Chemical mapping of a 207-nucleotide RNA with 2A3 and DMS.
For 2A3, 21,291 sequencing reads were counted.
Reactivities are given for positions 27 through 156.
It was measured as part of the RMDB library RNAMAK.
The DMS profile rests on 12,312 reads.
Conditions: 150 mM KOAc, 10 mM MgCl2 and 150 mM bicine (pH 8.5), 24 C.
[RMDB]
RNA sequence: GGGAACGACUCGAGUAGAGUCGAAAAGGGGUCGAGAGAGAACGAGGUCUGGACAUGAGCUGAAGCCUCCACGGCUCAACAGCCAGACUACCCACCGUUCUCAUCUCGACGGAGGCACCCAAACAACCAACUGUGUCUUCGGACACAGUUGGUUGAACAAUAACAGUAGGUUCGCCUACUGUUAUUGAAAAGAAACAACAACAACAAC
Reactivity to 2A3 in 0.01 (KOAc 150mM, MgCl2 10mM, bicine 150mM(pH8.5), 24C), signal-to-noise 8, nucleotides 027 to 156: g070g000g010g010u010c000g000a000g000a000g000a000g000a010a000c010g010a030g020g020u000c000u010g020g020a060c080a280u270g000a020g000c010u020g010a110a010g020c000c000u010c000c010a020c020g000g000c000u010c020a050a070c060a040g100c000c000a010g000a000c010u030a030c050c060c020a050c030c010g000u020u000c010u000c010a290u000c000u000c000g020a020c010g000g000a000g000g000c000a030c000c000c000a040a120a020c010a000a000c000c000a000a000c000u000g000u000g000u000c010u030u070c300g130g000a000c000a000c000a000g000u000u000g000g000u000u000g000a000a000
Reactivity to DMS in 0.01 (KOAc 150mM, MgCl2 10mM, bicine 150mM(pH8.5), 24C), signal-to-noise 5, nucleotides 027 to 156: g000g000g030g040u000c010g020a040g020a300g010a040g000a030a020c020g010a200g020g010u000c010u000g000g000a050c040a300u000g010a030g010c010u000g010a040a170g010c030c010u000c010c030a300c060g020g000c000u000c000a110a110c060a150g000c000c010a020g000a050c010u000a010c040c020c020a300c080c000g000u010u000c000u000c010a060u000c000u000c010g020a040c010g010g020a040g030g020c030a070c010c010c010a080a120a240c010a000a020c000c000a000a020c000u010g000u000g010u000c000u000u000c300g050g020a030c010a000c000a000g000u000u000g000g010u000u000g000a040a130